[RMDB]
RNA sequence: GGGAACGACUCGAGUAGAGUCGAAAAGAUAUGGAUCGGAUUGGGACAUGCCUGGAGGGUUCGGAAACGAACCCACAGGCAACAGCCCACGGUCCGAUCCUAAGUCAAAGAUCGGUUCGCCGAUCAAGUCAAUAAACGUCUUCGGACGUUUAUUGACAAAAGAAACAACAACAACAAC
Reactivity to 2A3 in 0.01 (KOAc 150mM, MgCl2 10mM, bicine 150mM(pH8.5), 24C), signal-to-noise 2, nucleotides 027 to 126: g030a020u080a000u200g010g000a000u000c010g010g000a000u020u120g060g010g000a020c090a150u130g000c000c030u100g130g090a300g120g010g000u000u020c030g060g060a080a090a050c000g000a010a000c010c000c000a010c000a020g010g000c000a010a000c000a000g000c010c020c000a000c060g050g040u000c000c020g010a010u010c000c000u010a170a040g040u020c040a160a030a150g020a000u000c000g000g080u130u080c300g030c130c000g020a010u000c010a020a020
Reactivity to DMS in 0.01 (KOAc 150mM, MgCl2 10mM, bicine 150mM(pH8.5), 24C), signal-to-noise 2, nucleotides 027 to 126: g000a060u020a300u010g010g010a000u000c010g020g010a030u010u000g000g030g000a030c020a300u000g020c010c000u010g000g000a170g010g000g000u000u020c010g000g000a150a170a280c020g000a020a000c020c000c000a030c000a010g000g010c010a000a010c250a210g010c000c020c000a150c300g020g000u000c000c000g040a010u000c000c000u000a000a030g020u010c070a120a120a210g000a010u000c000g010g010u000u030c280g040c010c000g000a000u010c000a090a090

This 177-nucleotide RNA was probed chemically with 2A3 and DMS. The 2A3 profile rests on 2,513 reads. It was measured as part of the RMDB library TTRDES. DMS adducts were read by reverse transcription with MarathonRT.